[RMDB]
This 170-nucleotide RNA was probed chemically with 2A3 and DMS.
The reactions ran in a buffer of 150 mM KOAc, 10 mM MgCl2 and 150 mM bicine (pH 8.5), at 24 C.
Source: RMDB library 15KLIB, as collected in RNAgym.

RNA sequence: GGGAACGACUCGAGUAGAGUCGAAAAGGCUGGGCAACAUUCCGAAGGGGACCGUCCCUCGGUAAUGGCGAAUGGGACCCAGAACUCUCUUUAGCUUCCGAAAGAGAAGCAAGAGAAAACUGGCUCUAUAACGAUUGCUUCGGCAAUCGUAAAAGAAACAACAACAACAAC
Reactivity to 2A3 in 0.01 (KOAc 150mM, MgCl2 10mM, bicine 150mM(pH8.5), 24C), signal-to-noise 3, nucleotides 027 to 129: g040g030c000u000g000g010g020c020a030a000c010a080u070u030c000c000g110a110a050g000g000g000g020a080c030c110g300u300c000c000c000u000c010g000g030u070a040a010u030g040g000c030g050a030a040u070g000g060g040a060c050c010c000a000g000a030a000c030u000c000u000c000u000u020u100a040g000c000u000u020c020c040g180a200a160a020g160a000g010a010a010g020c000a000a010g010a020g000a000a070a020a000c040u020g000g010c010u030c000u010a080u040a120
Reactivity to DMS in 0.01 (KOAc 150mM, MgCl2 10mM, bicine 150mM(pH8.5), 24C), signal-to-noise 3, nucleotides 027 to 129: g000g000c060u010g000g010g000c050a150a100c020a050u000u000c040c040g000a170a060g060g000g060g070a180c240c130g030u020c020c030c000u000c020g030g000u020a040a000u010g010g040c100g010a080a070u060g000g000g000a120c000c000c000a040g020a040a060c200u010c000u010c030u000u000u000a070g000c000u050u000c000c020g030a150a120a130g020a100g010a000a000g020c020a070a000g020a030g050a010a070a130a110c070u080g050g000c100u100c010u140a070u070a090